[RMDB]
RNA sequence: GGGAACGACUCGAGUAGAGUCGAAAAGGGGUCAGCCUGGAGCUCCCAUACAACUUUUGACGCUCUGAAGCCUCCACGGAGCGAUAAGUUGUGGGAGCGAUGAAGGGCUGACGGAGGCACCCAAAGCUAACUGUCGUCUUCGGACGACAGUUAGCAACAUACUUUUUGCCUUCGGGCAAAAAGUAUGAAAAGAAACAACAACAACAAC
Reactivity to 2A3 in 0.01 (KOAc 150mM, MgCl2 10mM, bicine 150mM(pH8.5), 24C), signal-to-noise 1, nucleotides 027 to 156: g130g030g040g000u010c000a010g000c000c010u040g010g000a010g010c000u000c010c000c020a020u130a060c060a000a050c060u050u270u300u300g070a030c000g010c000u000c000u000g030a090a020g020c010c000u010c000c020a000c000g000g000a000g000c000g000a020u090a300a060g010u020u000g000u000g000g010g000a000g000c000g000a000u010g000a000a000g000g000g030c000u000g000a000c000g000g000a000g010g030c000a010c010c000c010a050a110a000g000c000u000a000a000c010u000g000u000c000g010u000c020u010u130c300g100g000a000c010g000a000c000a000g000u000u000a000g000c000a000a000